[RMDB]
RNA sequence: GGGAACGACUCGAGUAGAGUCGAAAAGUUUAGCCAAAAGGCGUAGAUAACAAGUUCAUUAACAAGAAAAGCAAAGAGUCUCUUAACGGUUAAGAGCAUAGGGCACUUUACCUCUGAAACAAUGAGGACGAAAGUUUGAGUUCGCUCAAACUUUCGUAAAAGAAACAACAACAACAAC
Reactivity to 2A3 in 0.01 (KOAc 150mM, MgCl2 10mM, bicine 150mM(pH8.5), 24C), signal-to-noise 1, nucleotides 027 to 126: g010u020u060u300a120g000c000c000a000a300a000a160g030g010c020g120u170a000g040a070u000a000a040c080a050a000g000u010u030c100a270u260u060a120a030c040a170a010g060a000a200a000a000g030c000a000a090a000g060a000g100u030c000u000c000u000u030a010a000c160g240g070u050u020a000a000g000a000g000c000a010u080a040g000g060g090c050a000c080u000u200u050a050c000c000u000c000u010g070a010a010a010c030a030a230u100g000a000g000g040
Reactivity to DMS in 0.01 (KOAc 150mM, MgCl2 10mM, bicine 150mM(pH8.5), 24C), signal-to-noise 2, nucleotides 027 to 126: g000u000u020u020a130g030c070c010a070a300a220a130g010g000c000g000u020a080g040a120u020a000a050c150a000a130g000u060u010c100a070u050u000a180a040c110a040a050g010a020a080a020a060g000c070a060a030a100g020a220g000u040c050u000c010u000u000a030a210c220g000g020u010u000a010a020g000a000g050c100a100u030a000g060g000g010c050a070c060u000u060u050a060c040c010u090c000u000g000a190a180a180c100a020a130u070g000a000g060g000